[RMDB]
RNA sequence: GGGAACGACUCGAGUAGAGUCGAAAAGAUAUGGAACACACAGGGAGCUAAUUGUCGGAAACGACAACUAGCGAGGAUCUGUCGUGUUCCUAAGUCAAAGCAGAAAUCGGUUCGCCGAUUUCUGCAACUCUUUUAUUUCCUUCGGGAAAUAAAAGAGAAAAGAAACAACAACAACAAC
Reactivity to DMS in 0.01 (KOAc 150mM, MgCl2 10mM, bicine 150mM(pH8.5), 24C), signal-to-noise 2, nucleotides 027 to 126: g010a030u000a300u000g000g000a020a000c000a000c080a000c010a010g000g000g010a060g010c000u010a010a020u000u010g010u010c010g000g020a050a050a150c010g020a020c010a000a010c060u000a000g000c010g010a080g020g020a060u000c000u000g000u000c210g030u000g010u000u000c000c000u020a000a130g000u000c030a130a180a160g020c000a030g000a010a000a010u000c000g000g010u000u000c270g030c000c000g000a020u000u000u000c000u000g010c010a020a030
Reactivity to 2A3 in 0.01 (KOAc 150mM, MgCl2 10mM, bicine 150mM(pH8.5), 24C), signal-to-noise 2, nucleotides 027 to 126: g010a010u030a040u070g000g000a000a000c000a000c010a000c010a000g010g080g070a110g030c000u010a010a000u020u000g000u000c020g030g000a030a030a020c000g010a010c020a000a010c020u020a000g000c030g020a140g020g060a110u020c020u020g000u100c120g010u000g000u030u030c000c000u030a020a010g000u020c020a100a140a090g000c000a000g020a000a010a000u000c010g070g050u080u120c230g060c070c000g000a020u000u010u010c010u010g000c000a000a000
An RNA of 177 nucleotides, treated with DMS and 2A3 and read out base by base. The 2A3 profile rests on 5,454 reads. For 2A3 the reverse transcriptase was SuperScript II with manganese. 2A3 is a SHAPE reagent: it acylates the 2'-hydroxyl of flexible nucleotides of all four kinds.